[RMDB]
RNA sequence: GGGAACGACUCGAGUAGAGUCGAAAAGAUAUGGAGCUUGUAGGGAGCGUGUCAUCGGAAACGAUGGCACGCGAAGAACUACACGAGCUCCUAAGUCAAAAUCUUCGCUACUUCGGUAGCGAAGAAACACUCGUUAUUAGUUCGCUAAUAACGAGUGAAAAGAAACAACAACAACAAC
Reactivity to 2A3 in 0.01 (KOAc 150mM, MgCl2 10mM, bicine 150mM(pH8.5), 24C), signal-to-noise 3, nucleotides 027 to 126: g010a000u000a000u050g000g010a010g010c050u120u090g100u010a010g010g020g040a060g010c000g000u010g000u010c000a000u010c000g000g020a010a000a000c000g000a000u000g000g000c020a000c000g020c000g000a010a010g000a000a010c000u010a000c040a030c080g060a060g000c010u000c000c010u000a000a000g000u000c000a020a010a020a300u020c000u010u000c000g000c000u010a010c010u040u100c300g170g000u000a000g000c010g000a000a000g000a000a000a000
Reactivity to DMS in 0.01 (KOAc 150mM, MgCl2 10mM, bicine 150mM(pH8.5), 24C), signal-to-noise 5, nucleotides 027 to 126: g000a010u000a030u000g000g000a010g040c010u010u010g030u000a020g000g000g000a030g020c000g030u000g000u010c000a010u000c000g010g010a020a010a030c010g020a010u000g000g000c000a010c000g020c010g020a050a090g000a110a250c000u000a010c000a090c300g010a070g010c000u000c000c000u000a000a070g000u010c000a140a100a130a150u000c010u000u000c000g010c000u000a010c000u000u000c210g020g010u000a000g010c000g000a000a000g000a020a110a180